An RNA of 207 nucleotides, treated with 2A3 and read out base by base. For 2A3 the reverse transcriptase was SuperScript II with manganese. It was measured as part of the RMDB library OK3TST.
RNA sequence: GGGAACGACUCGAGUAGAGUCGAAAAGACCGCUGAUGGGCUCCCGUUGGGAGGUGCUCGCUUGGGCGGACCUCGGCGACGAAGAUCCCCGCGACUUCGUUCAGUACGAGGGCAACUCGUUCGUCGACGUGAUUCGCACGGUCCUCGCCGCGCGCCGCAGUGAGCAAAGGUUCGCCUUUGCUCACUGAAAAGAAACAACAACAACAAC
Reactivity to 2A3 in 0.01 (KOAc 150mM, MgCl2 10mM, bicine 150mM(pH8.5), 24C), signal-to-noise 2, nucleotides 027 to 156: g000a000c020c030g000c160u170g130a270u260g010g020g040c030u030c000c010c010g020u020u160g060g030g020a070g020g020u050g000c020u030c020g040c010u040u100g020g000g000c000g040g020a030c000c010u010c010g000g000c010g000a000c000g030a000a000g010a150u090c020c010c020c060g050c100g020a010c020u100u140c060g120u050u110c070a040g020u070a110c010g020a180g000g000g050c020a000a080c020u020c000g090u220u020c020g000u040c020g000a020c090g040u090g070a300u000u200c100g020c040a090c120g040g000u070c000c010u020c010g090c070c010g000c010g030c000g000c000c010g000
The RNA was probed in 150 mM KOAc, 10 mM MgCl2 and 150 mM bicine (pH 8.5) at 24 C.